[RMDB]
RNA sequence: GGGAACGACUCGAGUAGAGUCGAAAAAUAUUCAGUUUGAUACCUACAUACCUCAGAUUAAACAAUUAGUGAAUAAUAGUAUUGAGGGGCUGGCCUAUGAUCGCAUCAGUGUCAUUUUGGUGCCAUCGACCGCAAUAAAAUUCGUUUUAUUGCGGUCAAAAGAAACAACAACAACAAC
Reactivity to DMS in 0.01 (KOAc 150mM, MgCl2 10mM, bicine 150mM(pH8.5), 24C), signal-to-noise 4, nucleotides 027 to 126: a150u010a030u000u010c040a090g010u000u010u000g020a090u000a060c040c020u010a110c120a110u010a140c010c010u000c020a060g000a110u000u010a050a090a130c030a080a100u000u010a090g020u010g010a090a070u010a050a050u000a100g010u000a060u000u000g010a060g010g010g000g020c140u010g000g020c070c060u000a060u000g020a040u000c260g020c070a040u010c090a030g010u010g010u020c120a100u000u000u000u000g000g030u010g000c000c060a030u000c120
Reactivity to 2A3 in 0.01 (KOAc 150mM, MgCl2 10mM, bicine 150mM(pH8.5), 24C), signal-to-noise 3, nucleotides 027 to 126: a000u220a080u070u130c030a040g050u020u090u120g110a060u090a090c000c010u040a070c040a050u110a080c020c030u050c030a050g030a190u090u160a100a130a010c010a040a090u160u170a100g080u050g100a020a020u140a090a030u020a050g040u040a090u170u110g000a030g010g020g000g020c060u040g040g000c000c010u090a130u220g010a040u060c050g030c010a020u030c020a010g030u020g130u100c040a070u040u120u100u100g020g010u020g020c010c000a030u060c040

The record gives the reactivity of an RNA of 177 nucleotides to DMS and 2A3. For 2A3, 2,538 sequencing reads were counted. The reactions ran in a buffer of 150 mM KOAc, 10 mM MgCl2 and 150 mM bicine (pH 8.5), at 24 C. It was measured as part of the RMDB library OK2TRN. For 2A3 the reverse transcriptase was SuperScript II with manganese.